[RMDB]
RNA sequence: GGGAACGACUCGAGUAGAGUCGAAAAAAUUAAGUGAAUUAAAAUAAACAUGAAGAUCAAGAACAAGAUACAAACGGCAAGUAUCGUUCGAUCCAUGAAAUAAAUAAUAUCACAAAGCCGAUUAUAACGUCUUAUAGAUGUUCGCAUCUAUAAGACGAAAAGAAACAACAACAACAAC
Reactivity to 2A3 in 0.01 (KOAc 150mM, MgCl2 10mM, bicine 150mM(pH8.5), 24C), signal-to-noise 1, nucleotides 027 to 126: a010a010u210u130a150a020g000u000g000a000a000u020u100a000a110a010a050u020a000a000a030c000a020u010g080a100a050g000a020u010c040a110a070g040a000a000c040a100a090g020a010u040a000c030a030a210a000c070g220g000c070a090a060g000u000a000u040c000g000u000u000c020g000a000u000c000c020a000u020g000a260a300a000u020a000a000a000u060a010a010u060a070u030c000a000c020a010a100a000g090c000c000g030a060u170u160a090u110a140a030
Reactivity to DMS in 0.01 (KOAc 150mM, MgCl2 10mM, bicine 150mM(pH8.5), 24C), signal-to-noise 1, nucleotides 027 to 126: a100a150u010u010a080a170g020u010g010a020a030u010u010a060a010a070a040u000a090a140a050c000a000u000g000a170a120g000a010u000c060a050a240g000a050a020c030a120a110g030a060u010a000c030a000a040a190c100g000g000c140a060a210g040u000a000u000c010g000u000u000c000g000a010u000c000c000a020u000g030a020a130a030u000a060a040a030u010a020a010u000a080u010c000a020c000a080a130a140g000c010c020g010a100u000u000a140u020a080a030